[RMDB]
RNA sequence: GGGAACGACUCGAGUAGAGUCGAAAAGAUAUGGAGAUGAACUACUUUCCUACUCAACAAUGAUGAAACGUAUGCGUCGGAAACGACGCAUACGUUUUUGAGUUGAUCGGAAAGCAUCUCCUAAGUCCGUAUGGUUCCUGUUCGCAGGAACCAUACGAAAAGAAACAACAACAACAAC
Reactivity to DMS in 0.01 (KOAc 150mM, MgCl2 10mM, bicine 150mM(pH8.5), 24C), signal-to-noise 2, nucleotides 027 to 126: g010a100u000a300u000g000g010a000g020a000u000g030a130a080c110u010a300c010u010u000u020c000c010u060a190c300u000c010a040a010c040a150a270u030g020a300u020g000a000a030a010c000g010u000a000u000g000c000g050u040c000g000g030a090a060a300c010g000a010c000g030c000a000u000a000c000g010u000u000u010u000u000g000a170g030u000u000g000a010u000c300g020g010a010a010a000g010c000a000u010c000u000c010c010u010a020a120g000u000c030